[RMDB]
RNA sequence: GGGAACGACUCGAGUAGAGUCGAAAAAUAUACCUAACCUGAUUUAUAUUUACUGGUAUAAAAUAGUAGCAUCAUCUUAUUGAAUAGUUAUCAUACAAUAGGCUGUUCCUAUAAUCUGAUUGUGAGAGUGAACAUGAAAGUUCGCUUUCAUGUUCACAAAAGAAACAACAACAACAAC
Reactivity to 2A3 in 0.01 (KOAc 150mM, MgCl2 10mM, bicine 150mM(pH8.5), 24C), signal-to-noise 3, nucleotides 027 to 126: a000u100a010u040a060c020c010u050a140a050c010c070u080g080a100u110u150u090a130u070a030u020u150u100a050c050u040g000g020u000a030u050a070a080a050a050u140a030g030u020a010g020c000a000u010c000a000u000c000u000u050a050u010u070g010a040a000u020a030g050u060u050a100u210c070a030u080a210c010a080a110u080a090g010g000c000u010g000u000u000c000c030u030a070u060a020a030u030c050u120g050a270u120u090g000u020g020a040g000a010
Reactivity to DMS in 0.01 (KOAc 150mM, MgCl2 10mM, bicine 150mM(pH8.5), 24C), signal-to-noise 2, nucleotides 027 to 126: a090u020a110u000a020c000c000u000a060a160c090c000u020g000a090u020u050u020a090u040a020u040u020u040a060c110u010g000g020u000a020u000a050a050a070a020u060a140g000u020a060g020c130a050u030c040a020u010c000u000u000a020u000u000g010a030a030u000a070g000u030u020a050u040c150a110u020a130c050a010a040u000a000g000g020c030u000g010u000u010c090c040u020a020u000a070a080u050c190u010g010a060u000u030g050u000g000a170g020a210
About this RNA:
Source: RMDB library OK1LIB, as collected in RNAgym. Structure probing data (2A3 and DMS) for a 177-nucleotide construct. DMS adducts were read by reverse transcription with MarathonRT. The 2A3 profile rests on 2,049 reads.